The record gives the reactivity of an RNA of 177 nucleotides to 2A3. Reactivities are given for positions 27 through 126. As a SHAPE reagent, 2A3 marks flexible, mostly unpaired nucleotides at the ribose 2'-OH. The RNA was probed in 150 mM KOAc, 10 mM MgCl2 and 150 mM bicine (pH 8.5) at 24 C.
[RMDB]
RNA sequence: GGGAACGACUCGAGUAGAGUCGAAAAGCCUUCGACCAGUCCCAGGACGGGGCAAUGCUCCAGUUCGAGAUCCUUAAGGCCAAGCACUUCAACAUCCCGGAGGAGAUCAUCCAAGGAUACCUGGACAGCCGGAGAGCCGUUUCGACGGCUCUCCGGCAAAAGAAACAACAACAACAAC
Reactivity to 2A3 in 0.01 (KOAc 150mM, MgCl2 10mM, bicine 150mM(pH8.5), 24C), signal-to-noise 1, nucleotides 027 to 126: g000c000c000u040u140c000g010a010c000c020a000g130u030c000c000c070a000g100g000a000c070g000g000g000g110c040a000a090u300g040c000u000c000c020a000g000u140u140c070g000a000g010a100u050c000c000u160u020a160a190g000g120c040c000a070a020g080c010a020c100u010u040c090a040a240c090a220u040c040c000c000g120g000a040g000g000a080g000a040u100c050a000u000c090c000a000a020g060g000a000u020a030c010c000u090g060g060a040c000a010